[RMDB]
RNA sequence: GGGAACGACUCGAGUAGAGUCGAAAAAUGAAUGACAAGGAGCUGAAAAAGUUUGCCGCCUGUAUCUCAUCGCAGCUUUUCAUGAUGUAUGAGGAACUCAGCGAUGCCUGGGUGGAUGCACAUGGCAACCUCCAUGCAGUUUCGACUGCAUGGAGGUAAAAGAAACAACAACAACAAC
Reactivity to 2A3 in 0.01 (KOAc 150mM, MgCl2 10mM, bicine 150mM(pH8.5), 24C), signal-to-noise 1, nucleotides 027 to 126: a020u040g040a040a020u080g040a020c010a010a050g080g010a000g020c060u060g110a080a070a010a000a030g050u090u080u070g000c050c010g020c000c000u070g030u100a100u010c130u040c000a020u010c050g050c030a040g000c010u000u020u160u060c010a030u060g120a100u140g110u160a060u060g010a010g000g060a000a000c020u020c030a050g000c090g170a030u080g020c050c060u010g000g000g010u000g000g010a030u030g030c060a020c010a080u030g040g000c000a000
Reactivity to DMS in 0.01 (KOAc 150mM, MgCl2 10mM, bicine 150mM(pH8.5), 24C), signal-to-noise 2, nucleotides 027 to 126: a060u020g000a110a090u000g000a110c070a140a110g000g000a140g030c030u010g010a040a050a110a110a090g000u000u000u020g010c040c040g010c050c070u000g000u000a020u000c060u000c020a000u000c070g010c030a050g020c050u000u010u000u000c080a030u000g020a130u000g020u010a030u000g000a090g030g000a020a030c040u000c200a090g020c020g020a050u010g000c160c090u000g010g000g010u000g010g030a060u000g000c060a070c140a060u020g030g010c120a080
An RNA of 177 nucleotides, treated with 2A3 and DMS and read out base by base. For DMS the reverse transcriptase was MarathonRT. The RNA was probed in 150 mM KOAc, 10 mM MgCl2 and 150 mM bicine (pH 8.5) at 24 C. The DMS profile rests on 1,255 reads.